[RMDB]
RNA sequence: GGGAACGACUCGAGUAGAGUCGAAAACCUCAAGUCUCUUGAUAGUCUUGUUGACCUUCCGGAGGUCCCUCUCGAGCUCCUCCUUUCUUCUUCUUGCAUCGAUCCACUUUCCGAGUUGCUCUUCUCUAACAGUGCGUCUUCGGACGCACUAAAAGAAACAACAACAACAAC
Reactivity to 2A3 in 0.01 (KOAc 150mM, MgCl2 10mM, bicine 150mM(pH8.5), 24C), signal-to-noise 2, nucleotides 027 to 129: c010c000u020c040a040a070g050u000c010u000c000u020u020g030a020u090a040g000u010c000u090u070g000u050u080g060a040c000c000u030u040c010c000g030g090a050g030g030u030c000c000c000u060c010u020c020g030a040g000c030u020c000c000u030c000c000u000u030u030c000u000u000c000u060u000c000u000u030g000c000a050u030c030g050a050u120c060c000a020c000u050u040u010c040c010g020a000g030u050u030g000c020u000c010u100u000c000u000c010u000a080a110c040
Reactivity to DMS in 0.01 (KOAc 150mM, MgCl2 10mM, bicine 150mM(pH8.5), 24C), signal-to-noise 3, nucleotides 027 to 129: c050c000u030c090a060a130g020u000c010u000c010u080u030g010a110u020a000g040u030c020u000u040g050u030u010g020a130c100c110u020u010c070c070g000g000a070g010g000u030c100c050c020u000c000u010c050g030a080g000c130u010c030c040u040c000c000u040u050u000c010u040u020c070u010u010c000u090u030g000c060a000u050c080g030a150u010c020c060a050c080u000u000u050c000c060g010a090g000u040u000g000c010u000c060u000u030c000u020c080u010a040a080c080